[RMDB]
RNA sequence: GGGAACGACUCGAGUAGAGUCGAAAAGGGAACUAUGAUGCACGGCAGCGCGGAAGGUGCGCGCCAGUCCGUCAAAGCUGACGGGCGGCUCAUACCAGCGGUCCAUCUGUACGCAUUCCACAUAAUCCAGCAGUUCUCGGCGGUCCAGAACAGGAACCGUUUUGAAACAGUUCGCUGUUUCAAAACGAAAAGAAACAACAACAACAAC
Reactivity to 2A3 in 0.01 (KOAc 150mM, MgCl2 10mM, bicine 150mM(pH8.5), 24C), signal-to-noise 1, nucleotides 027 to 156: g050g020g010a030a030c040u040a030u180g010a040u150g020c070a000c130g060g000c020a070g070c050g000c010g070g040a160a050g040g020u080g000c030g000c030g020c020c010a030g000u020c000c000g010u010c020a050a150a140g220c210u080g030a010c000g000g010g010c010g000g000c020u030c100a090u120a040c000c020a010g010c040g040g010u080c030c000a030u000c000u030g030u070a060c000g030c060a070u120u000c030c010a120c000a110u130a080a040u040c000c010a010g060c010a000g080u040u000c020u000c010g050g010c020g050g000u000c020c020a030g020a090a040c050a060g070g050a000a050c020

Structure probing data (2A3) for a 207-nucleotide construct. The reactions ran in a buffer of 150 mM KOAc, 10 mM MgCl2 and 150 mM bicine (pH 8.5), at 24 C. For 2A3, 1,005 sequencing reads were counted. Reactivities are given for positions 27 through 156. It was measured as part of the RMDB library OK3TST. 2A3 adducts were read by reverse transcription with SuperScript II with manganese.